[RMDB]
RNA sequence: GGGAACGACUCGAGUAGAGUCGAAAAUCUGUAGAUACUUCUGUGGAUGUAAUGGACUUCACUCAUGUUGGCUCAUCUGAUGACUUUAACAACAAUAUGGCAUUUAGGUCCAGUGAGAUGAAGAGUCCUAGUGAGUGGAGAAACAUCACAUCAAGAAUAUUGCAACGCGCUUCGGCGCGUUGCAAUAAAAAGAAACAACAACAACAAC
Reactivity to 2A3 in 0.01 (KOAc 150mM, MgCl2 10mM, bicine 150mM(pH8.5), 24C), signal-to-noise 1, nucleotides 027 to 156: u000c030u000g180u040a040g000a120u240a170c180u040u250c080u000g300u010g290g000a000u000g000u030a050a030u000g030g000a000c000u000u000c000a000c040u000c000a110u010g160u300u170g050g000c000u000c000a010u000c040u000g250a100u040g000a110c000u100u190u180a020a010c150a030a000c000a000a280u010a050u300g030g000c060a010u000u000u150a030g000g000u000c010c000a000g060u000g040a150g000a000u040g000a000a060g030a030g050u050c000c000u020a040g000u000g000a000g000u010g000g020a000g050a010a010a010c000a000u000c000a000c000a000u000c000a000a000g000a060a000
Chemical mapping of a 207-nucleotide RNA with 2A3. For 2A3 the reverse transcriptase was SuperScript II with manganese. Source: RMDB library OK3TST, as collected in RNAgym.